[RMDB]
RNA sequence: GGGAACGACUCGAGUAGAGUCGAAAACCUGUUUGACAAUGAAACUGGUGCGUUCGCACCUCAAGAACAGGCUACGUCGUAAACCAUAAUAUCCCAACGCGGUCGGGAAUCCUCGCCCUUCAGGGCGCGCAAAGGAUUUGUUCGCAAAUCCUUUGCGAAAAGAAACAACAACAACAAC
Reactivity to 2A3 in 0.01 (KOAc 150mM, MgCl2 10mM, bicine 150mM(pH8.5), 24C), signal-to-noise 1, nucleotides 027 to 126: c000c000u000g030u000u040u030g120a100c090a020a040u180g050a160a170a020c070u050g030g000u000g000c020g140u220u160c120g000c010a010c000c000u040c020a030a060g010a010a000c000a000g010g000c010u010a040c020g080u080c020g050u070a000a150a080c000c000a050u120a120a090u080a150u050c000c000c000a010a000c030g000c050g140g020u050c040g030g030g030a010a030u010c020c010u030c010g000c000c000c000u140u160c130a150g000g000g040c000g000
Reactivity to DMS in 0.01 (KOAc 150mM, MgCl2 10mM, bicine 150mM(pH8.5), 24C), signal-to-noise 1, nucleotides 027 to 126: c010c010u000g000u010u010u010g000a160c150a070a070u010g010a220a120a080c120u000g020g000u000g000c000g030u000u010c300g030c000a000c000c020u000c110a100a140g070a020a040c020a010g020g000c040u000a110c120g060u020c050g000u010a070a180a170c040c000a040u000a060a130u000a220u000c000c020c030a220a080c190g080c110g000g020u000c040g020g000g010a150a030u010c050c000u000c020g000c010c000c000u020u000c270a110g040g000g000c000g010